[RMDB]
RNA sequence: GGGAACGACUCGAGUAGAGUCGAAAAGCUAUGAUGACUGGUAAAACGAUAUUGCCUUAUUCACAUCGUAAGAAUUCGUCCAGAUGACACUAUCUCCUUCCGGCUUUAACCCUGUGGAUUAAGGCCGAAAUGGUUCUGGGUUCGCCCAGAACCAUUUAAAAGAAACAACAACAACAAC
Reactivity to 2A3 in 0.01 (KOAc 150mM, MgCl2 10mM, bicine 150mM(pH8.5), 24C), signal-to-noise 3, nucleotides 027 to 126: g000c000u040a040u190g050a010u020g040a070c050u090g010g030u070a030a030a100a100c070g050a080u080a100u080u150g010c040c000u030u090a050u030u070c060a030c040a170u050c070g040u070a040a000g030a100a110u050u030c030g000u000c020c010a000g000a160u090g040a020c010a000c040u030a060u050c100u090c030c000u010u120c010c020g000g000c000u000u020u000a030a030c000c000c060u150g170u210g050g020a050u010u010a000a000g000g000c000c000g010
Reactivity to DMS in 0.01 (KOAc 150mM, MgCl2 10mM, bicine 150mM(pH8.5), 24C), signal-to-noise 2, nucleotides 027 to 126: g010c090u010a040u000g000a040u000g000a050c050u000g000g000u020a010a110a120a090c130g010a070u030a070u010u010g030c020c030u000u000a050u030u010c100a130c070a080u010c120g030u030a060a080g020a130a070u000u030c050g000u040c080c030a030g000a100u000g010a040c040a060c040u010a080u000c070u000c030c090u000u000c150c020g000g040c010u010u020u000a010a020c000c020c110u060g000u030g000g000a050u000u000a030a000g000g000c000c040g040

Background: Structure probing data (2A3 and DMS) for a 177-nucleotide construct. High 2A3 reactivity points to a flexible backbone, as in loops and unpaired stretches. In probing experiments dimethyl sulfate is read out at A N1 and C N3, which are open when not base-paired. The RNA was probed in 150 mM KOAc, 10 mM MgCl2 and 150 mM bicine (pH 8.5) at 24 C. Reactivities are rounded to 0.1 and cut off at 0 and 3.